The record gives the reactivity of an RNA of 177 nucleotides to DMS and 2A3. Reactivities are rounded to 0.1 and cut off at 0 and 3. Conditions: 150 mM KOAc, 10 mM MgCl2 and 150 mM bicine (pH 8.5), 24 C. It was measured as part of the RMDB library OK1LIB. DMS adducts were read by reverse transcription with MarathonRT.

[RMDB]
RNA sequence: GGGAACGACUCGAGUAGAGUCGAAAACAUGUACGCUUCAAGUGCGGCGGUCGGCCAGAGUCGACAGGCUCCCUAGCUCGUAGGACGUCCGAUGGGGAUGACAUCGAGGUGGUGUGCCGCGCCACCGUCUUGGGUUGGUCUUCGGGCCGACUCAAGAAAAAGAAACAACAACAACAAC
Reactivity to DMS in 0.01 (KOAc 150mM, MgCl2 10mM, bicine 150mM(pH8.5), 24C), signal-to-noise 9, nucleotides 027 to 126: c080a090u020g020u010a050c110g010c040u010u010c090a090a090g010u030g010c030g010g010c030g010g010u000c020g000g010c010c110a110g000a100g000u000c020g000a070c170a090g010g000c020u000c010c030c010u000a110g000c030u000c030g010u010a130g000g010a100c050g020u010c030c030g000a100u030g000g000g000g000a060u010g000a110c060a090u020c050g010a090g000g010u010g000g020u000g010u020g010c010c010g010c050g000c000c010a010c010c000g010
Reactivity to 2A3 in 0.01 (KOAc 150mM, MgCl2 10mM, bicine 150mM(pH8.5), 24C), signal-to-noise 9, nucleotides 027 to 126: c030a020u100g030u120a040c030g010c030u050u100c090a080a040g040u030g080c000g010g000c000g020g010u030c010g010g000c010c030a050g020a020g080u030c020g030a050c030a040g050g020c010u020c000c010c000u020a040g040c010u000c040g050u050a080g010g050a030c000g020u000c000c010g070a110u070g000g020g000g020a030u040g020a020c010a040u050c030g020a020g010g010u020g000g010u030g030u070g020c000c010g000c010g000c000c000a010c000c000g010